This 177-nucleotide RNA was probed chemically with 2A3 and DMS.
For DMS, 12,077 sequencing reads were counted.
RNA sequence: GGGAACGACUCGAGUAGAGUCGAAAAUCUACCUUAUCCGUACCGCAGCCCAAAGUAAUUCCGUGGGCAGUCACUACGCCGAACCGGUUACUGAUAACUCGGAGGUCAAGAAAGUCAGUGAAACCAAUGAACAAAAGAUAUUCGUAUCUUUUGUUCAAAAAGAAACAACAACAACAAC
Reactivity to 2A3 in 0.01 (KOAc 150mM, MgCl2 10mM, bicine 150mM(pH8.5), 24C), signal-to-noise 5, nucleotides 027 to 126: u010c010u020a130c000c000u080u120a070u070c020c020g030u030a050c000c050g060c070a030g030c010c010c010a060a070a020g020u040a040a120u220u020c040c020g010u060g000g000g020c000a010g010u000c000a000c040u060a010c040g000c010c010g030a050a030c030c020g000g000u000u020a050c040u050g090a110u050a170a040c010u010c040g080g010a040g010g040u070c030a040a050g060a130a050a010g070u120c090a000g010u020g050a060a010a010c030c020a060a170
Reactivity to DMS in 0.01 (KOAc 150mM, MgCl2 10mM, bicine 150mM(pH8.5), 24C), signal-to-noise 9, nucleotides 027 to 126: u000c070u000a120c040c020u000u000a080u000c030c040g020u010a090c060c060g010c140a110g010c020c030c060a080a120a060g010u010a060a090u010u010c030c070g020u000g000g010g010c020a100g010u010c070a050c060u000a080c080g010c030c020g000a090a100c110c040g000g010u000u000a050c050u010g010a130u010a090a140c080u000c040g010g010a110g010g010u000c090a060a080g010a060a050a050g000u010c090a030g010u000g000a050a110a120c100c090a060a140
For DMS the reverse transcriptase was MarathonRT. The reactions ran in a buffer of 150 mM KOAc, 10 mM MgCl2 and 150 mM bicine (pH 8.5), at 24 C. 2A3 adducts were read by reverse transcription with SuperScript II with manganese. Values cover nucleotides 27 to 126.